[RMDB]
RNA sequence: GGGAACGACUCGAGUAGAGUCGAAAACCCUACCUUACUCGAAAACCCGUCGAUGAAGACCACUAAAUGACGAAUCCUAAUAACCCAAUGGGUUUCAUUGCGGAUAUGAGGCAUUUGUCUGAGCGGGCACGUUAUAAUACUUCGGUAUUAUAACGUGAAAAGAAACAACAACAACAAC
Reactivity to 2A3 in 0.01 (KOAc 150mM, MgCl2 10mM, bicine 150mM(pH8.5), 24C), signal-to-noise 5, nucleotides 027 to 126: c010c000c000u040a080c010c010u050u120a100c020u050c100g050a040a040a060a080c020c010c010g030u050c040g040a040u100g070a080a040g080a060c010c010a040c100u130a110a120a090u140g010a000c010g010a000a000u000c000c000u030a070a020u020a030a030c010c010c010a010a020u030g150g040g000u030u150u290c010a010u010u020g040c150g030g000a010u020a020u050g020a010g010g000c020a010u020u020u030g000u020c020u020g020a020g030c030g030g000g000
Reactivity to DMS in 0.01 (KOAc 150mM, MgCl2 10mM, bicine 150mM(pH8.5), 24C), signal-to-noise 6, nucleotides 027 to 126: c010c000c010u010a090c150c030u000u000a060c060u010c030g000a060a050a100a150c060c050c050g030u000c050g010a080u010g000a080a070g010a160c080c050a050c070u000a050a110a100u010g000a010c010g000a020a010u000c010c000u000a080a010u000a020a050c010c000c000a010a010u010g010g010g020u000u010u010c000a010u000u000g000c190g020g000a100u000a000u000g010a010g010g000c150a010u000u000u000g000u000c010u000g010a090g010c050g000g000g010
The record gives the reactivity of an RNA of 177 nucleotides to 2A3 and DMS. For DMS the reverse transcriptase was MarathonRT. The DMS profile rests on 9,181 reads. The RNA was probed in 150 mM KOAc, 10 mM MgCl2 and 150 mM bicine (pH 8.5) at 24 C. It was measured as part of the RMDB library RFMREP.